RNA sequence: GGGAACGACUCGAGUAGAGUCGAAAAAUUUCUAACUUAGCCGCAGAAAACUCACAGCUAAAAAAUAAAAUAGAGGACAAUUCGACUGCCACUCACCAUAUGAAAGAAAACUAUGAGAAGCAGUUAAAAUUAGGUAAUGAUUCGUCAUUACCUAAUUAAAAGAAACAACAACAACAAC
Reactivity to DMS in 0.01 (KOAc 150mM, MgCl2 10mM, bicine 150mM(pH8.5), 24C), signal-to-noise 2, nucleotides 027 to 126: a170u010u000u010c000u040a130a160c130u000u000a020g010c000c020g010c100a110g020a110a060a140a080c100u010c040a080c020a180g000c010u000a000a030a060a140a040a120u010a060a040a060a070u020a110g000a040g010g010a030c080a060a080u030u000c030g010a000c020u000g010c010c070a160c060u020c030a040c100c050a050u010a030u010g000a030a070a090g010a120a040a070a050c180u000a030u010g000a040g000a090a130g020c030a000g030u000u010a060a070
Reactivity to 2A3 in 0.01 (KOAc 150mM, MgCl2 10mM, bicine 150mM(pH8.5), 24C), signal-to-noise 1, nucleotides 027 to 126: a000u010u050u060c000u000a010a120c020u030u070a030g020c000c020g040c090a020g160a120a140a070a050c010u020c010a030c010a010g010c000u060a020a070a070a030a080a070u110a090a080a050a000u180a110g070a050g000g010a030c020a010a090u130u080c040g000a000c020u020g010c030c020a100c020u010c050a060c060c000a040u030a050u150g130a140a070a050g140a030a150a020a000c050u080a030u090g010a010g000a030a000g000c000a000g000u000u040a020a260